[RMDB]
RNA sequence: GGGAACGACUCGAGUAGAGUCGAAAAAGGCACUGGGCUGCCUGUCUCACAAAAGGCGCCUGCCGUUGAAGACGUCGCUGGAGUUUCGUGAGCGGUUCGGUAUCGAGGUCGAGGAACUCGACGAGUAGAUCGAUGGCAUCUUCGGAUGCCAUCGAUCAAAAGAAACAACAACAACAAC
Reactivity to 2A3 in 0.01 (KOAc 150mM, MgCl2 10mM, bicine 150mM(pH8.5), 24C), signal-to-noise 1, nucleotides 027 to 126: a000g060g000c020a060c170u180g080g170g000c100u150g000c000c000u000g080u040c000u120c000a120c070a010a130a070a120g020g010c030g060c000c000u040g030c000c060g000u090u120g040a040a000g030a000c020g100u000c010g020c030u020g000g090a090g040u000u090u000c040g010u010g010a030g050c000g010g000u010u010c100g050g040u140a020u130c040g010a040g050g040u000c000g000a010g080g160a030a060c000u000c000g020a020c000g000a010g050u080a060